Record summary:
The record gives the reactivity of an RNA of 177 nucleotides to DMS and 2A3. The 2A3 profile rests on 53,276 reads. 2A3 adducts were read by reverse transcription with SuperScript II with manganese. The DMS profile rests on 51,248 reads. Reactivities are given for positions 27 through 126.
RNA sequence: GGGAACGACUCGAGUAGAGUCGAAAAGAGAUGGAGAGCGACGCGCUGAAGGUGUCGCACUGGCGCAAGAGCAGCCAGUGGGCCGUGCUGCGCCGCGACCACGCGCAGAUCAUCGCCGAUGACACGGCAUAUCCUGUACUUUCGAGUACAGGAUAUGAAAAGAAACAACAACAACAAC
Reactivity to DMS in 0.01 (KOAc 150mM, MgCl2 10mM, bicine 150mM(pH8.5), 24C), signal-to-noise 9, nucleotides 027 to 126: g010a120g010a120u000g000g000a060g010a260g010c020g010a060c040g010c030g020c030u000g010a120a110g020g010u010g020u010c010g020c010a030c060u000g010g000c000g020c020a140a120g000a160g010c020a120g020c000c010a070g020u000g010g010g020c010c030g020u000g000c100u010g020c010g020c010c020g010c040g000a100c040c040a080c110g010c040g000c040a050g000a120u010c040a070u000c110g010c020c020g010a100u000g000a120c110a090c050g000g010
Reactivity to 2A3 in 0.01 (KOAc 150mM, MgCl2 10mM, bicine 150mM(pH8.5), 24C), signal-to-noise 9, nucleotides 027 to 126: g080a000g010a080u080g020g020a100g010a010g120c020g020a020c020g020c000g000c030u080g080a150a050g150g020u160g030u070c040g050c140a010c030u030g010g000c010g000c070a210a130g060a080g230c080a040g000c000c000a010g050u070g010g030g000c020c020g040u060g040c030u070g000c000g000c010c010g020c030g010a030c010c020a020c040g040c000g000c040a030g020a110u090c020a020u040c030g050c070c030g040a050u080g020a010c030a020c110g030g000